[RMDB]
RNA sequence: GGGAACGACUCGAGUAGAGUCGAAAAGAUAUGGACCUUCGCCAGGUGGAGAUGACGGGUCGGAAACGACCUACAUCGCUGACUGGAACUACGAAGGUCCUAAGUCAAAGCCAAUCUUCGGAUUGGCGUGACUCCUGUCGUUCGCGACAGGAGUCACAAAAGAAACAACAACAACAAC
Reactivity to 2A3 in 0.01 (KOAc 150mM, MgCl2 10mM, bicine 150mM(pH8.5), 24C), signal-to-noise 1, nucleotides 027 to 126: g040a010u060a060u240g010g010a020c010c000u000u000c030g000c000c050a020g020g120u140g080g130a060g000a030u020g070a300c240g010g000g000u020c010g010g010a080a140a050c000g000a000c000c000u000a010c000a000u000c010g000c070u070g000a040c010u000g010g070a080a050c110u190a040c240g000a010a000g010g000u000c000c000u000a020a000g000u000c020a170a090a000g000c000c000a000a000u020c010u010u140c290g210g010a010u000u070g030g000c010
Reactivity to DMS in 0.01 (KOAc 150mM, MgCl2 10mM, bicine 150mM(pH8.5), 24C), signal-to-noise 2, nucleotides 027 to 126: g000a070u010a300u010g000g000a040c010c000u000u000c020g010c040c020a040g000g040u000g000g010a060g030a020u000g000a050c300g020g040g000u000c020g010g020a070a120a300c010g000a000c010c010u000a120c010a020u000c020g000c020u010g000a060c000u000g020g010a130a070c160u030a300c040g020a000a010g000g010u000c000c000u000a010a030g000u010c010a110a090a170g000c000c000a010a000u010c010u000u020c300g010g030a010u000u000g000g000c000
An RNA of 177 nucleotides, treated with 2A3 and DMS and read out base by base. For 2A3 the reverse transcriptase was SuperScript II with manganese. Reactivities are given for positions 27 through 126. For 2A3, 2,380 sequencing reads were counted.